[RMDB]
RNA sequence: GGGAACGACUCGAGUAGAGUCGAAAAUUCCUGAGCCUUGUACACACCGCCCGUCAAGCCACGAAAGCGGGGGGCACCUAAAGUCGCCGGGCUAACCUUCGGGAGGCAGGUGCCUAGGGUGAACUCCACAACCGUUGUAUUUCGAUACAACGGUUGUAAAAGAAACAACAACAACAAC
Reactivity to DMS in 0.01 (KOAc 150mM, MgCl2 10mM, bicine 150mM(pH8.5), 24C), signal-to-noise 3, nucleotides 027 to 126: u010u000c000c000u020g020a090g000c060c040u020u010g020u000a060c090a080c030a090c020c030g020c030c010c000g010u020c090a080a120g000c010c010a070c120g000a060a110a110g020c050g020g000g000g000g000g010c000a000c020c010u000a060a090a100g020u000c020g010c010c000g000g000g020c040u000a050a180c080c050u000u040c080g010g020g030a300g000g010c030a100g010g060u000g010c020c010u000a180g000g010g030u000g010a050a040c020u000c030c050
An RNA of 177 nucleotides, treated with DMS and read out base by base. Conditions: 150 mM KOAc, 10 mM MgCl2 and 150 mM bicine (pH 8.5), 24 C. Values cover nucleotides 27 to 126.